Chemical mapping of a 207-nucleotide RNA with 2A3.
2A3 adducts were read by reverse transcription with SuperScript II with manganese.
For 2A3, 810 sequencing reads were counted.
RNA sequence: GGGAACGACUCGAGUAGAGUCGAAAAGAAAGAAAGAACCCUUCCCGCGGGGCUGGAUCUUCCAGAUGGUGCGGGCCGGGACAAGCCGGAGAGUGUCCCGGGUUCAGAAACAACCUUCGGCAGCCAAACUAGACUACCCACUUCGGUGGGUAGUCAAUCCUAGUAUAUGCUUCGGCAUAUACUAGGAAAAAGAAACAACAACAACAAC
Reactivity to 2A3 in 0.01 (KOAc 150mM, MgCl2 10mM, bicine 150mM(pH8.5), 24C), signal-to-noise 1, nucleotides 027 to 156: g010a020a090a020g110a000a150a030g070a070a060c030c000c000u000u000c010c000c000g000c010g010g000g000g010c000u000g010g040a170u170c120u220u150c220c000a010g000a010u020g000g230u040g010c000g010g000g000c000c020g000g000g000a000c000a000a000g000c010c000g000g000a010g000a010g010u010g000u010c020c000c000g000g000g010u060u000c010a000g080a010a010a030c010a010a020c010c000u000u010c000g010g000c000a040g070c090c060a030a120a160c120u140a050g000a020c000u020a010c020c010c000a000c000u000u010c120g000g000u010g000g000g000u000a000g000u010c000a000a000